[RMDB]
RNA sequence: GGGAACGACUCGAGUAGAGUCGAAAAGUGACACUGUUCGCAGUGUCACAAAGUGGUGGAUCUAGAACCACAAUAACUAGAUCAAAGUUCUAGUCUAGAUCAAAAGCAUACAGUUCGCUGUAUGCAAUCAUCACACAGAGUUCGCUCUGUGUGAUGAAAAAGAAACAACAACAACAAC
Reactivity to 2A3 in 0.01 (KOAc 150mM, MgCl2 10mM, bicine 150mM(pH8.5), 24C), signal-to-noise 3, nucleotides 027 to 126: g010u000g000a010c000a000c000u010g020u060u050c200g020c110a000g000u010g000u010c000a000c000a010a010a000g010u010g000g010u020g020g010a010u010c000u020a020g000a020a030c010c000a010c030a010a040u120a020a010c010u010a000g010a030u070c130a130a160a060g110u090u000c010u010a020g010u000c000u020a010g010a000u020c010a000a060a010a020g000c000a000u000a000c000a000g030u030u060c130g090c090u000g000u000a000u000g000c000a000a000
Reactivity to DMS in 0.01 (KOAc 150mM, MgCl2 10mM, bicine 150mM(pH8.5), 24C), signal-to-noise 3, nucleotides 027 to 126: g010u000g000a030c010a010c000u000g010u000u010c230g030c010a000g010u010g010u010c000a000c000a040a060a090g000u000g010g020u010g010g010a000u010c010u000a010g010a080a050c010c010a020c040a090a130u010a050a050c010u000a000g010a030u000c130a100a160a200g000u000u000c000u000a010g000u000c000u000a010g010a000u000c050a080a130a100a100g000c000a010u000a000c000a020g020u010u020c270g040c010u010g020u000a000u000g000c000a030a030